[RMDB]
RNA sequence: GGGAACGACUCGAGUAGAGUCGAAAACCAAGGGACGUGCGACGGAGUCCCGGGAGCGACGGUUACCAACAAACAAGCCUCCAUCGCACCGCAUGAAUUUUCACGCGGCCCUAUCACGGGAGAGAACUUAGUCCUGAUUGUUCGCAAUCAGGACUAAAAAAGAAACAACAACAACAAC
Reactivity to 2A3 in 0.01 (KOAc 150mM, MgCl2 10mM, bicine 150mM(pH8.5), 24C), signal-to-noise 4, nucleotides 027 to 126: c020c010a070a070g050g020g020a050c120g030u070g000c020g020a010c020g010g060a010g020u020c000c000c000g000g020g010a040g010c050g080a080c030g030g030u070u100a090c040c020a100a070c060a060a220a020c070a100a010g050c010c010u030c000c000a050u010c020g000c020a010c000c000g000c020a010u070g050a140a150u130u070u140u220c030a040c060g010c000g020g030c000c000c000u210a210u090c060a020c020g000g030g000a080g010a000g030a060a020c030
Reactivity to DMS in 0.01 (KOAc 150mM, MgCl2 10mM, bicine 150mM(pH8.5), 24C), signal-to-noise 3, nucleotides 027 to 126: c010c000a180a120g000g000g010a050c090g000u020g010c020g010a060c080g000g020a070g020u010c000c020c000g000g000g030a110g010c040g040a120c220g000g000u020u030a110c150c090a140a110c260a050a060a090c200a020a110g000c070c000u020c020c030a080u020c040g020c080a130c000c020g000c000a050u020g040a020a190u030u010u060u000c000a020c030g000c030g020g000c060c000c050u020a080u030c030a080c060g000g000g000a130g000a110g000a120a110c080